[RMDB]
RNA sequence: GGGAACGACUCGAGUAGAGUCGAAAACUGAUGAAUUAACUUAUCAACAGUUAAUGGAUGAGUCUAGUAAAUUAGCACAUCGAUUACAAGGUAGUAAGAAACCGAUGAUUUUAUUCGGUCACAUGUCGUAAGUCAUGGUGUUCGCACCAUGACUUACAAAAGAAACAACAACAACAAC
Reactivity to DMS in 0.01 (KOAc 150mM, MgCl2 10mM, bicine 150mM(pH8.5), 24C), signal-to-noise 2, nucleotides 027 to 126: c000u030g000a040u010g000a040a040u060u030a100a150c040u000u000a030u000c070a250a110c100a110g000u060u010a000a010u000g070g020a020u010g000a110g000u070c000u000a080g000u010a060a040a170u130u010a010g000c010a300c000a020u000c000g000a010u000u010a020c090a050a110g000g040u020a130g020u000a060a080g010a050a130a040c000c000g000a000u000g000a160u020u040u010u010a040u000u000c050g000g010u000c130a040c150a010u020g000u010c190
Reactivity to 2A3 in 0.01 (KOAc 150mM, MgCl2 10mM, bicine 150mM(pH8.5), 24C), signal-to-noise 4, nucleotides 027 to 126: c080u080g030a130u080g020a110a080u210u150a190a000c040u140u030a030u100c040a010a080c000a020g050u080u070a040a000u020g110g070a000u000g010a000g100u030c010u010a130g040u250a050a080a250u120u020a030g000c020a000c000a110u020c020g230a050u080u050a000c030a130a000g130g000u020a000g080u090a050a070g020a200a030a030c000c010g000a000u060g010a000u030u100u240u230a060u040u030c020g030g050u040c040a040c020a110u160g060u250c060